Structure probing data (DMS and 2A3) for a 177-nucleotide construct.
[RMDB]
RNA sequence: GGGAACGACUCGAGUAGAGUCGAAAAAGGCGAUAGCCGGUGCCUGCAAUACGUCUGUUCUCGUGACUAUUUUCACUCGCUGACGGUCAGCACGGUAGUAUCGUCGUGAGAAGCGGUAGUUCACCGAGUACCGUGCCAUCUUCGGAUGGCACGGUACAAAAGAAACAACAACAACAAC
Reactivity to DMS in 0.01 (KOAc 150mM, MgCl2 10mM, bicine 150mM(pH8.5), 24C), signal-to-noise 1, nucleotides 027 to 126: a090g000g010c010g000a060u030a120g050c010c000g000g040u020g020c070c030u010g010c300a090a090u000a150c000g010u010c030u010g000u000u040c000u000c090g040u000g010a010c300u000a090u000u000u000u000c040a050c000u000c070g000c010u010g040a000c030g000g000u020c110a070g000c020a040c050g000g010u000a090g000u010a010u000c000g010u000c070g010u000g000a100g010a130a110g080c230g010g000u000a050g000u020u000c090a070c010c000g000a150
Reactivity to 2A3 in 0.01 (KOAc 150mM, MgCl2 10mM, bicine 150mM(pH8.5), 24C), signal-to-noise 1, nucleotides 027 to 126: a010g040g000c010g010a010u110a050g040c050c000g020g010u020g040c060c080u010g000c070a050a170u130a170c020g000u030c000u020g110u230u010c120u010c080g000u000g000a000c080u130a260u190u120u070u020c010a010c010u000c040g000c010u040g000a000c000g050g030u050c000a010g020c000a000c020g070g060u020a060g070u000a040u010c020g020u000c010g020u090g070a110g040a100a030g020c000g000g010u000a020g000u070u030c020a010c050c020g020a000

For DMS the reverse transcriptase was MarathonRT. Conditions: 150 mM KOAc, 10 mM MgCl2 and 150 mM bicine (pH 8.5), 24 C. For 2A3, 870 sequencing reads were counted. For 2A3 the reverse transcriptase was SuperScript II with manganese.